[RMDB]
RNA sequence: GGGAACGACUCGAGUAGAGUCGAAAAAGAGCCGACGAACCUUCCAACCUUCCAACCUUCCAACCUUCCAACCUUCCAUCCUUCCAAUCUACUCGAGAGGAGGAGGAGGAGGAGGAGGAGGACAUAAGAUUAUACACCUGUUCGCAGGUGUAUAAUCAAAAGAAACAACAACAACAAC
Reactivity to DMS in 0.01 (KOAc 150mM, MgCl2 10mM, bicine 150mM(pH8.5), 24C), signal-to-noise 2, nucleotides 027 to 126: a080g010a060g010c000c010g020a070c110g020a050a100c040c030u010u000c060c040a080a200c060c040u000u010c020c050a030a130c060c010u020u000c030c020a110a080c050c000u000u000c000c020a090a060c040c030u000u000c010c020a090u000c050c020u000u010c010c030a120a190u000c010u010a030c070u010c040g000a010g010a220g010g000a130g010g010a080g000g000a100g000g000a090g000g000a110g010g010a110g000g010a160g000g000a300c170a040u000a080a070
Reactivity to 2A3 in 0.01 (KOAc 150mM, MgCl2 10mM, bicine 150mM(pH8.5), 24C), signal-to-noise 3, nucleotides 027 to 126: a000g080a040g060c030c020g010a020c020g010a050a030c000c000u020u020c030c000a080a060c020c020u050u000c030c020a080a080c010c020u040u040c010c020a100a100c030c020u070u000c010c020a100a080c030c010u080u040c020c020a160u020c000c010u100u000c010c010a000a070u010c010u060a070c060u060c080g030a030g010a020g060g020a010g020g030a020g010g020a050g020g030a050g000g060a020g010g010a010g010g040a020g020g010a000c010a070u220a030a070
About this RNA:
This 177-nucleotide RNA was probed chemically with DMS and 2A3. Source: RMDB library M2PK90, as collected in RNAgym. The RNA was probed in 150 mM KOAc, 10 mM MgCl2 and 150 mM bicine (pH 8.5) at 24 C. For 2A3, 4,790 sequencing reads were counted.